[RMDB]
RNA sequence: GGGAACGACUCGAGUAGAGUCGAAAAGAUAUGGACCACUGUUCGACCUCGAAGAACUCGGAAACGAGGGAGAGGGAAUUGGUCCUAAGUCAAAAGCCAUCCAUCACGUUCGCGUGAUGGAUGGCAAGGACAUAAUGAUGUUCGCAUCAUUAUGUCCAAAAGAAACAACAACAACAAC
Reactivity to DMS in 0.01 (KOAc 150mM, MgCl2 10mM, bicine 150mM(pH8.5), 24C), signal-to-noise 5, nucleotides 027 to 126: g010a040u010a300u000g000g010a000c000c010a060c300u000g020u000u000c090g010a240c010c000u000c000g000a060a140g000a110a190c010u000c010g010g020a130a100a170c010g000a030g000g010g000a050g000a020g030g000g020a050a050u010u000g010g020u000c000c000u010a030a090g000u010c060a070a060a100a150g000c000c000a000u000c000c000a010u000c000a010c000g000u000u010c230g010c000g010u000g000a010u000g000g000a010u000g000g010c010a000a000
Reactivity to 2A3 in 0.01 (KOAc 150mM, MgCl2 10mM, bicine 150mM(pH8.5), 24C), signal-to-noise 4, nucleotides 027 to 126: g020a030u090a030u180g000g000a010c010c010a050c160u110g150u110u070c140g300a270c060c000u030c030g190a300a080g000a070a040c010u000c010g010g040a120a060a060c010g000a010g020g010g020a040g010a000g010g020g020a020a030u050u050g000g010u010c000c000u020a110a040g040u030c040a030a030a050a070g000c000c000a010u000c000c000a000u010c000a000c020g050u080u080c300g020c010g140u000g000a010u000g000g000a000u000g000g010c000a000a000